The record gives the reactivity of an RNA of 177 nucleotides to DMS and 2A3.

[RMDB]
RNA sequence: GGGAACGACUCGAGUAGAGUCGAAAAUGCGUCAUCGGCAUUUCGUCGUGACGCACGCCGUCGACGUCAUAAGCAACGCAGAUCGGGAUCUCGCCGAUGCCGGUGAGCACGUCGAGCUUGGUCAAGAUCUGGGAAUUCUGUUCGCAGAAUUCCCAGAAAAAGAAACAACAACAACAAC
Reactivity to DMS in 0.01 (KOAc 150mM, MgCl2 10mM, bicine 150mM(pH8.5), 24C), signal-to-noise 2, nucleotides 027 to 126: u000g000c000g010u000c000a020u040c030g030g000c010a160u000u000u000c150g030u010c000g030u000g010a000c010g050c030a020c100g000c070c020g050u000c020g050a010c000g010u000c080a070u010a200a140g040c130a070a090c120g040c040a070g000a020u000c020g020g040g010a100u020c060u000c260g020c040c090g000a040u000g000c050c010g010g010u000g000a160g020c110a070c000g000u010c030g000a050g000c100u000u030g020g010u000c050a070a070g000a130
Reactivity to 2A3 in 0.01 (KOAc 150mM, MgCl2 10mM, bicine 150mM(pH8.5), 24C), signal-to-noise 1, nucleotides 027 to 126: u080g000c020g000u020c010a130u150c060g020g000c030a050u210u070u180c210g000u000c000g000u010g000a000c000g000c020a000c040g000c050c010g040u010c010g000a020c000g030u040c020a040u010a240a030g140c030a040a060c060g050c020a000g010a120u080c000g000g070g020a140u040c070u060c100g030c020c080g080a070u030g050c020c010g140g000u110g010a070g060c030a000c010g000u000c020g000a000g000c080u050u040g000g060u050c030a040a050g000a130
The reactions ran in a buffer of 150 mM KOAc, 10 mM MgCl2 and 150 mM bicine (pH 8.5), at 24 C. 2A3 adducts were read by reverse transcription with SuperScript II with manganese. As a SHAPE reagent, 2A3 marks flexible, mostly unpaired nucleotides at the ribose 2'-OH.